[RMDB]
Background
Structure probing data (DMS) for a 177-nucleotide construct.

RNA sequence: GGGAACGACUCGAGUAGAGUCGAAAAUUUAGGUUGAUUGUCACAGGCUAUCCUUUAGUAACUGCUCUAAUCAUACUCUAUCUAGCUGCUGGUAGGUAUCUAUCUGUUCUUGUACUUGUGAUGAUGGGUUAAUUGACGACUUCGGUCGUCAAUUAACAAAAGAAACAACAACAACAAC
Reactivity to DMS in 0.01 (KOAc 150mM, MgCl2 10mM, bicine 150mM(pH8.5), 24C), signal-to-noise 1, nucleotides 027 to 126: u010u000u010a070g020g020u010u010g010a100u010u000g010u010c020a060c040a040g010g010c060u000a070u000c090c080u000u010u020a080g020u000a070a060c070u000g010c100u020c030u000a060a080u000c080a120u000a060c060u020c020u000a060u000c030u000a120g030c110u000g020c060u000g000g000u000a020g010g010u000a030u010c120u000a060u010c040u000g020u010u000c050u000u010g010u010a080c080u010u010g010u000g020a070u000g020a080u000g050g020